Annotation: Structure probing data (DMS and 2A3) for a 177-nucleotide construct. 2A3 adducts were read by reverse transcription with SuperScript II with manganese.
RNA sequence: GGGAACGACUCGAGUAGAGUCGAAAAACAAAUCUGCGGAUACCAUAGGCUAUGUGGCACAAAGGCCUUACAUUCUGGUGACGAAGCCAAAGACCAAAGAGGACUACAUGAAUGCACUGAGGUUCAGAGAUAGGGGCUAAUUCGUUAGCCCCUAUCUAAAAGAAACAACAACAACAAC
Reactivity to DMS in 0.01 (KOAc 150mM, MgCl2 10mM, bicine 150mM(pH8.5), 24C), signal-to-noise 3, nucleotides 027 to 126: a040c080a080a110a080u010c050u010g020c070g010g030a090u020a020c050c040a030u000a040g000g010c070u000a070u010g040u000g030g010c030a140c060a060a090a070g000g000c050c010u030u010a030c070a120u040u030c090u020g020g010u010g000a090c110g030a080a120g000c030c020a060a070a060g000a110c050c040a040a060a050g030a040g020g010a050c040u010a080c110a030u020g000a020a050u010g010c020a060c070u020g000a090g000g000u000u000c040a040g010
Reactivity to 2A3 in 0.01 (KOAc 150mM, MgCl2 10mM, bicine 150mM(pH8.5), 24C), signal-to-noise 4, nucleotides 027 to 126: a000c090a010a110a020u080c060u090g020c070g060g020a070u040a170c020c020a080u120a060g030g000c020u050a030u140g100u080g040g000c050a010c030a170a110a060g080g000c010c000u050u030a050c060a050u030u180c030u090g010g030u060g080a030c060g120a040a000g020c000c000a040a180a010g040a010c010c010a070a060a000g060a050g020g010a020c030u040a020c030a040u090g120a140a040u110g050c020a020c050u030g010a010g030g010u100u100c030a020g040